[RMDB]
RNA sequence: GGGAACGACUCGAGUAGAGUCGAAAAAAAAAGGACCAACAGCCGAGCGAGUGACUGAAAACGGCAAAGUCACGAAGCAUCGUUAUACCUAAAUGGUCGUAGCGAAAUAAGAGUUGUUCCCAGUAAACAGUUUUAAAGGUUUCGACCUUUAAAACUGAAAAGAAACAACAACAACAAC
Reactivity to 2A3 in 0.01 (KOAc 150mM, MgCl2 10mM, bicine 150mM(pH8.5), 24C), signal-to-noise 1, nucleotides 027 to 126: a000a000a020a020a100g130g000a050c000c030a020a060c030a010g080c090c030g030a010g030c000g000a060g030u030g000a010c010u030g040a150a050a090a070c040g070g000c060a100a020a000g030u000c000a000c000g000a080a010g030c000a080u010c010g000u010u050a050u030a080c000c010u170a270a220a100u120g040g030u070c060g000u010a010g080c000g030a030a040a060u070a080a060g000a030g000u000u040g010u000u020c000c000c000a000g000u010a020a020a000
Reactivity to DMS in 0.01 (KOAc 150mM, MgCl2 10mM, bicine 150mM(pH8.5), 24C), signal-to-noise 1, nucleotides 027 to 126: a040a000a130a140a080g000g010a060c010c060a040a040c170a110g000c110c030g000a110g000c020g010a210g000u000g000a000c000u000g000a020a050a010a090c130g020g020c050a090a050a020g000u000c010a010c030g000a150a160g010c010a090u000c020g020u000u000a040u000a070c000c000u020a030a040a080u000g010g000u000c040g050u010a010g000c020g010a030a040a090u010a070a130g000a060g010u000u000g000u000u000c000c000c000a120g020u000a070a030a280
Source: RMDB library M2PK90, as collected in RNAgym. The record gives the reactivity of an RNA of 177 nucleotides to 2A3 and DMS. For 2A3 the reverse transcriptase was SuperScript II with manganese.